[RMDB]
RNA sequence: GGGAACGACUCGAGUAGAGUCGAAAAGCAACCAAAGUUCGAACGUUCACUCAGCUUGUGGGUACACUCAAGGAAUCGGUUGGCUCAGGCUGGUCCGAAACCUUCGAGUUGCUUAUUGGUGACUUCACUCAAGCUACGGAUUUGUUCACCAAGGUCAGUGUAAAACAGGGUUCGCCCUGUUUUACACAAAAGAAACAACAACAACAAC
Reactivity to 2A3 in 0.01 (KOAc 150mM, MgCl2 10mM, bicine 150mM(pH8.5), 24C), signal-to-noise 3, nucleotides 027 to 156: g010c030a030a030c000c010a100a030a030g070u110u200c110g040a040a020c040g040u090u070c060a060c120u100c050a020g010c040u070u040g040u090g080g020g010u060a060c060a000c080u010c010a010a010g020g010a010a030u010c010g000g020u040u050g020g000c010u020c060a030g220g000c010u030g010g060u090c020c010g000a010a010a010c000c000u000u050c080g000a010g000u020u020g000c010u060u100a140u130u110g060g000u050g070a130c050u140u090c150a040c060u070c040a020a050g000c020u050a020c080g010g000a020u050u030u140g010u020u020c020a030c060c020a040a020g100g030u070c060a060
Reactivity to DMS in 0.01 (KOAc 150mM, MgCl2 10mM, bicine 150mM(pH8.5), 24C), signal-to-noise 2, nucleotides 027 to 156: g010c040a120a100c020c010a070a100a100g030u010u000c040g010a060a140c050g040u000u000c070a080c030u000c060a120g010c040u000u000g050u000g010g000g040u000a070c070a110c010u000c030a060a050g000g000a020a240u000c020g040g030u020u020g030g010c040u000c130a170g060g040c000u000g000g020u020c010c000g000a040a030a260c010c000u010u000c110g000a100g020u000u000g020c000u000u000a170u010u000g020g020u000g020a040c040u020u000c010a090c030u000c000a030a040g020c010u000a130c050g030g020a120u000u020u000g010u000u000c000a020c040c010a060a120g000g000u000c110a220